Source: RMDB library OK1LIB, as collected in RNAgym. Structure probing data (2A3 and DMS) for a 177-nucleotide construct.
RNA sequence: GGGAACGACUCGAGUAGAGUCGAAAAGGUGCGCUGGGCGCCCGGAUGACCGGGGGCGGCUUCGGGGGCGCCGUGAUCGCACUGGUGCCUGCCGAUAGGGCGCGCGACGUGGCCGACACGGUGCGACCCACCGGUUUUCAUUCGUGAAAACCGGUGGAAAAGAAACAACAACAACAAC
Reactivity to 2A3 in 0.01 (KOAc 150mM, MgCl2 10mM, bicine 150mM(pH8.5), 24C), signal-to-noise 3, nucleotides 027 to 126: g050g030u040g000c020g010c000u090g030g080g010c000g080c000c040c000g020g040a190u240g250a260c030c010g000g000g000g070g120c060g030g010c000u020u050c030g060g000g010g000g000c000g010c010c000g010u030g010a170u110c040g010c090a020c040u030g010g010u030g000c000c000u140g220c020c000g060a110u170a200g050g010g000c000g000c010g010c000g010a060c030g030u040g040g030c080c000g030a040c010a000c050g070g040u030g000c010g030a060c010
Reactivity to DMS in 0.01 (KOAc 150mM, MgCl2 10mM, bicine 150mM(pH8.5), 24C), signal-to-noise 1, nucleotides 027 to 126: g010g050u020g060c030g040c030u010g010g000g010c020g010c010c010c030g030g020a120u010g000a160c060c010g000g030g040g000g010c030g000g000c100u000u000c030g030g000g000g020g010c000g010c010c000g030u000g000a180u030c150g000c010a000c000u010g000g020u000g020c000c010u000g060c020c030g000a080u030a060g000g000g000c000g000c000g000c000g020a130c100g010u010g010g010c030c050g000a150c010a000c030g010g000u000g000c060g000a090c160